Structure probing data (2A3 and DMS) for a 207-nucleotide construct. The RNA was probed in 150 mM KOAc, 10 mM MgCl2 and 150 mM bicine (pH 8.5) at 24 C. For DMS, 1,634 sequencing reads were counted. The 2A3 profile rests on 1,424 reads.
[RMDB]
RNA sequence: GGGAACGACUCGAGUAGAGUCGAAAAGGCGGUGUCAGUGUCUUUACCUGUUAUCAGGUCAGAAAAUACCUAGAUCUGAUUCAAGCCCACCUUAUAACCCUGGGUAUCAACGAAUACACCUUCGUGGGCUCCAGUCUAACAAAGGUUGACUUUUUAGCGUUUAGAAUUCAUUCGUGAAUUCUAAACGAAAAGAAACAACAACAACAAC
Reactivity to 2A3 in 0.01 (KOAc 150mM, MgCl2 10mM, bicine 150mM(pH8.5), 24C), signal-to-noise 3, nucleotides 027 to 156: g010g030c060g110g020u080g060u120c050a060g030u040g030u110c050u050u100u100a120c010c010u020g050u120u070a040u070c020a000g000g010u000c010a010g160a060a200a020a060u170a160c020c010u040a080g000a040u020c000u010g000a000u050u080c040a050a000g010c020c000c000a020c000c010u130u240a180u130a200a080c010c020c060u030g000g000g010u040a060u100c040a110a110c050g080a140a040u090a070c060a150c080c000u010u130c040g000u020g000g000g030c000u010c020c010a070g030u050c080u130a050a070c060a080a130a020g100g000u080u070g080a150c000u050u040u010u020u100a090g040
Reactivity to DMS in 0.01 (KOAc 150mM, MgCl2 10mM, bicine 150mM(pH8.5), 24C), signal-to-noise 1, nucleotides 027 to 156: g050g010c000g030g090u010g000u000c020a150g040u030g010u000c050u000u010u000a130c040c020u060g020u000u000a110u020c010a020g020g030u010c090a110g020a080a100a070a110u020a070c080c030u000a090g010a100u000c030u010g010a080u010u010c070a100a160g000c000c010c010a060c020c050u010u010a080u000a150a150c050c000c000u000g010g030g070u000a020u020c060a100a170c150g010a080a120u010a060c020a020c080c030u000u000c020g000u000g040g000g000c000u000c200c010a100g010u010c070u010a050a160c030a080a060a170g020g020u010u010g030a090c150u000u000u000u000u000a090g050